[RMDB]
Record summary: The record gives the reactivity of an RNA of 207 nucleotides to 2A3. For 2A3 the reverse transcriptase was SuperScript II with manganese. The data come from the RNA Mapping Database (RMDB), library VIROID. 2A3 is a SHAPE reagent: it acylates the 2'-hydroxyl of flexible nucleotides of all four kinds.
RNA sequence: GGGAACGACUCGAGUAGAGUCGAAAACGUAACCGUGUGAGGCCAACAUCAAAGAUGCGUACCUAGCUGCGUUUCAACCUGCGUGGGUUGAGGCGGCUUAGCGGAUUAGGGCGUUCUGCCCCAGUGGUACCAUUACCCUAUGCAAAGUCUGCAUGCACCUCCGCGUAUCGUUCGCGAUACGCGGAGGAAAAGAAACAACAACAACAAC
Reactivity to 2A3 in 0.01 (KOAc 150mM, MgCl2 10mM, bicine 150mM(pH8.5), 24C), signal-to-noise 1, nucleotides 027 to 156: c070g000u040a040a040c000c050g080u050g110u090g080a280g060g020c040c020a010a030c020a210u180c050a040a070a160g030a030u080g000c040g030u050a180c000c000u000a020g000c000u040g000c000g100u090u000u000c010a010a000c000c000u110g120c270g170u300g060g000g020u000u000g000a010g020g000c000g080g000c020u080u080a010g010c030g040g000a040u070u140a010g030g040g000c090g120u270u050c040u180g020c000c020c000c000a020g040u050g070g040u000a000c080c000a000u020u080a000c000c050c000u040a020u040g020c000a040a040a040g080u000c070u050g020c020a020u010g080c000a010